Source information: Chemical mapping of a 177-nucleotide RNA with DMS and 2A3. The reactions ran in a buffer of 150 mM KOAc, 10 mM MgCl2 and 150 mM bicine (pH 8.5), at 24 C.
RNA sequence: GGGAACGACUCGAGUAGAGUCGAAAAGGAUGUACUCCAAAGGCGAUCGGUUGGAACACAACCUCCCCAACUCUGGCUGGGAUUGUGCCAGGUCAGCCUUGUCAGACUUGGUCUAUCGUGCACUCAAUAUCAUUAGGGCUUUCGAGCCCUAAUGAUAAAAAGAAACAACAACAACAAC
Reactivity to DMS in 0.01 (KOAc 150mM, MgCl2 10mM, bicine 150mM(pH8.5), 24C), signal-to-noise 2, nucleotides 027 to 126: g010g030a120u010g000u000a090c040u000c030c010a020a050a070g020g020c070g010a050u000c050g020g030u000u020g010g020a090a110c080a050c020a020a040c030c000u010c080c030c000c030a070a090c140u000c070u010g000g030c040u020g000g020g020a090u010u000g000u010g040c020c010a050g010g000u000c020a080g040c050c110u000u000g010u010c030a110g020a030c030u000u000g000g000u010c050u010a020u000c070g020u000g010c070a100c090u000c050a040a140
Reactivity to 2A3 in 0.01 (KOAc 150mM, MgCl2 10mM, bicine 150mM(pH8.5), 24C), signal-to-noise 1, nucleotides 027 to 126: g000g010a050u070g000u110a060c020u000c040c000a050a000a050g070g040c040g050a100u040c020g130g010u050u030g010g000a090a080c020a000c000a080a000c000c010u070c000c000c000c010a020a130c070u070c040u100g050g030c020u030g090g060g050a080u040u110g050u080g000c000c000a000g000g010u020c000a010g010c000c100u090u110g070u060c020a000g010a060c010u030u030g020g040u020c000u010a030u020c020g080u140g050c030a040c050u100c020a050a110

Record summary: DMS adducts were read by reverse transcription with MarathonRT.